[RMDB]
RNA sequence: GGGAACGACUCGAGUAGAGUCGAAAAUGCAACCGACGACUGAACAGACGUGUGAACAGUUUGAGUGUGGUAGCGCUGUGUGAGUUGGCGGUGGAACCCCCUCGUGGUGACACGAGCCCCCGUGGCCACCUCUUUAGUAGUUCGCUACUAAAGAGGUAAAAGAAACAACAACAACAAC
Reactivity to DMS in 0.01 (KOAc 150mM, MgCl2 10mM, bicine 150mM(pH8.5), 24C), signal-to-noise 9, nucleotides 027 to 126: u030g010c160a150a040c010c010g010a040c020g000a010c010u000g010a160a050c020a010g000a120c040g020u000g000u030g060a110a040c020a040g010u020u030u040g010a160g010u010g010u000g000g010u030a270g000c010g010c010u000g010u000g010u030g000a040g010u000u000g010g000c020g010g000u000g000g010a110a090c040c010c010c200c010u000c010g030u000g000g000u040g000a230c010a010c000g010a030g010c010c000c000c050c030g020u010g010g000c110c100
Reactivity to 2A3 in 0.01 (KOAc 150mM, MgCl2 10mM, bicine 150mM(pH8.5), 24C), signal-to-noise 9, nucleotides 027 to 126: u140g000c030a030a020c000c000g020a020c000g010a000c010u050g080a080a000c010a010g290a170c020g050u070g080u130g110a080a020c020a080g110u160u270u270g270a250g080u130g010u030g020g090u070a020g000c000g000c010u000g000u010g020u030g070a030g010u010u020g020g000c000g010g000u020g000g020a040a060c000c000c000c010c000u000c000g010u010g000g040u100g040a030c000a000c020g000a010g000c000c000c000c000c010g050u080g040g010c030c010

The record gives the reactivity of an RNA of 177 nucleotides to DMS and 2A3. Values cover nucleotides 27 to 126. It was measured as part of the RMDB libraries RFM100 and RFMREP. The RNA was probed in 150 mM KOAc, 10 mM MgCl2 and 150 mM bicine (pH 8.5) at 24 C.